[RMDB]
RNA sequence: GGGAACGACUCGAGUAGAGUCGAAAAGACUUUGCAAAUAUUGGUUUGGAUGCGCUGGUUUUAUGAAAUGCCUUUCUUUUUGGAGAAUCUUUCCACUAUCACCCUCCAAGAUGAAAUAUGUCCCACCUACCUGCUAAAACUCAAGAGGACAGGUUCAUCGAUUAUCCCUAUUCGUAGGGAUAAUCGAAAAAGAAACAACAACAACAAC
Reactivity to 2A3 in 0.01 (KOAc 150mM, MgCl2 10mM, bicine 150mM(pH8.5), 24C), signal-to-noise 3, nucleotides 027 to 156: g010a030c060u100u090u120g010c050a110a110a010u100a120u150u130g060g020u030u060u110g010g010a040u040g000c070g000c060u050g020g060u060u060u100u060a050u070g080a070a080a060u080g010c000c000u030u060u030c020u010u080u010u010u020g040g000a030g020a080a070u050c050u040u140u080c090c030a040c070u120a140u270c040a030c090c030c000u000c020c000a000a010g010a020u040g030a040a040a000u160a080u100g060u030c020c000c010a040c000c020u030a040c000c000u010g050c010u130a070a070a110a080c060u070c100a020a060g040a070g060g040a090c040a010g060g000u100u130c000a050
Reactivity to DMS in 0.01 (KOAc 150mM, MgCl2 10mM, bicine 150mM(pH8.5), 24C), signal-to-noise 1, nucleotides 027 to 156: g000a080c060u020u000u000g010c050a110a160a100u000a070u020u020g000g020u000u010u000g010g010a060u010g020c060g000c060u000g010g030u000u000u010u010a070u000g020a040a070a070u020g000c040c050u000u020u000c010u000u030u010u000u010g000g010a050g000a050a070u030c020u000u000u000c020c070a060c140u010a100u000c030a070c030c020c000u030c010c010a050a040g010a080u000g010a050a050a040u000a050u010g000u030c020c000c000a050c100c040u000a060c030c010u010g070c030u000a050a040a050a150c080u000c050a090a040g010a110g020g000a030c000a020g010g010u000u000c060a150